[RMDB]
The record gives the reactivity of an RNA of 177 nucleotides to DMS and 2A3.

RNA sequence: GGGAACGACUCGAGUAGAGUCGAAAAGUGACCCCGCCGGCCUGGCUGGAGCCCGGGCAGUGGUGGGCCCUGGUUCGGGUCGGUUGCGCGGGUCAGUUGGUCUAUUCGCCGGCGGUGAAGGUGAGCGGACAAUACGGGUAUUCGUACCCGUAUUGUCAAAAGAAACAACAACAACAAC
Reactivity to DMS in 0.01 (KOAc 150mM, MgCl2 10mM, bicine 150mM(pH8.5), 24C), signal-to-noise 2, nucleotides 027 to 126: g010u000g000a050c010c010c000c020g010c010c010g010g000c000c020u010g020g010c010u000g020g000a060g000c020c000c030g020g000g020c060a050g020u000g020g020u000g020g020g010c010c010c000u010g000g000u010u020c060g020g010g010u000c020g000g000u000u010g020c090g040c110g020g000g010u010c010a010g020u000u000g020g000u000c020u010a120u020u010c080g000c040c060g010g000c060g020g000u000g020a040a110g010g010u000g010a090g030c150g020
Reactivity to 2A3 in 0.01 (KOAc 150mM, MgCl2 10mM, bicine 150mM(pH8.5), 24C), signal-to-noise 1, nucleotides 027 to 126: g060u010g020a000c030c020c000c000g010c040c020g000g020c010c010u030g000g000c010u020g060g000a000g000c030c020c000g040g070g000c060a080g080u210g100g100u050g050g070g020c000c000c010u020g050g000u090u300c050g020g000g030u000c010g000g050u010u170g000c110g030c030g010g020g000u020c000a000g020u050u070g000g010u000c030u060a150u090u080c060g030c050c020g120g000c060g000g170u100g070a040a040g040g050u100g030a040g000c090g040
2A3 adducts were read by reverse transcription with SuperScript II with manganese.
Reactivities are given for positions 27 through 126.